[RMDB]
The data come from the RNA Mapping Database (RMDB), library TTRDES. Structure probing data (DMS and 2A3) for a 177-nucleotide construct.
RNA sequence: GGGAACGACUCGAGUAGAGUCGAAAAGAUAUGGAUUAUGGCAAGCGAGGAUCAUGCAUUCGGAAACGAAUGGCAUGGGAGCUUGCAUAAUCCUAAGUCAAAAGCUAUCCCGGUUCGCCGGGAUAGCGGAUUUAAAUUAGUUCGCUAAUUUAAAUCCAAAAGAAACAACAACAACAAC
Reactivity to DMS in 0.01 (KOAc 150mM, MgCl2 10mM, bicine 150mM(pH8.5), 24C), signal-to-noise 4, nucleotides 027 to 126: g010a020u000a070u000g000g010a010u000u000a010u000g010g020c010a010a000g020c010g020a120g020g000a040u010c000a000u000g000c000a020u000u000c010g020g010a020a020a050c000g020a010a010u000g020g010c010a010u000g010g010g010a030g010c000u000u000g000c010a000u000a000a000u000c000c000u000a010a070g000u010c000a110a110a120a250g010c000u000a010u000c000c000c010g000g010u000u010c280g030c000c000g020g010g000a000u000a000g010c000
Reactivity to 2A3 in 0.01 (KOAc 150mM, MgCl2 10mM, bicine 150mM(pH8.5), 24C), signal-to-noise 3, nucleotides 027 to 126: g010a000u010a000u050g000g010a010u010u000a010u040g250g150c010a020a000g000c010g150a300g130g030a030u020c010a000u000g020c010a010u020u000c000g000g000a000a020a000c000g000a000a010u070g190g000c010a000u000g000g010g000a040g000c000u000u000g000c000a000u000a010a000u000c000c000u000a010a000g010u000c010a130a050a060a080g020c000u010a000u000c000c020c010g000g010u070u050c250g030c040c020g000g020g000a000u000a000g010c000
The reactions ran in a buffer of 150 mM KOAc, 10 mM MgCl2 and 150 mM bicine (pH 8.5), at 24 C.